[RMDB]
RNA sequence: GGGAACGACUCGAGUAGAGUCGAAAAAAGUACAGUGACGAAAGUGGCAAAGCUGGCACACCUGAUGAGCGCGGAGAGUGUAGAAGCAGUCCAGAUGAAGAUAGCGGCUGAUCUAGAUGUGAGUGUGCAAAGGGGUCAAAUUCGUUUGACCCCUUUGAAAAGAAACAACAACAACAAC
Reactivity to 2A3 in 0.01 (KOAc 150mM, MgCl2 10mM, bicine 150mM(pH8.5), 24C), signal-to-noise 1, nucleotides 027 to 126: a000a000g070u070a040c030a020g030u010g110a000c020g040a160a030a050g090u050g000g030c030a030a050a050g060c060u040g010g100c040a010c000a010c070c010u080g030a070u060g030a030g060c000g020c010g000g030a030g020a010g030u120g000u040a050g010a070a010g010c040a010g010u020c040c000a040g000a080u070g040a120a030g060a110u110a040g020c030g010g050c040u000g000a030u070c000u050a030g010a170u020g040u020g130a150g020u070g020u010g090
Reactivity to DMS in 0.01 (KOAc 150mM, MgCl2 10mM, bicine 150mM(pH8.5), 24C), signal-to-noise 4, nucleotides 027 to 126: a060a050g000u000a070c070a040g020u000g010a060c090g000a030a070a080g010u000g010g000c030a050a070a120g020c040u000g010g000c030a070c060a080c040c040u010g000a090u010g000a090g000c060g040c080g000g000a070g010a080g030u010g000u000a050g010a110a090g010c040a050g000u000c040c040a090g010a130u000g010a090a100g010a120u010a070g010c060g000g000c040u000g000a040u000c030u010a070g000a050u010g000u010g010a090g010u000g020u000g010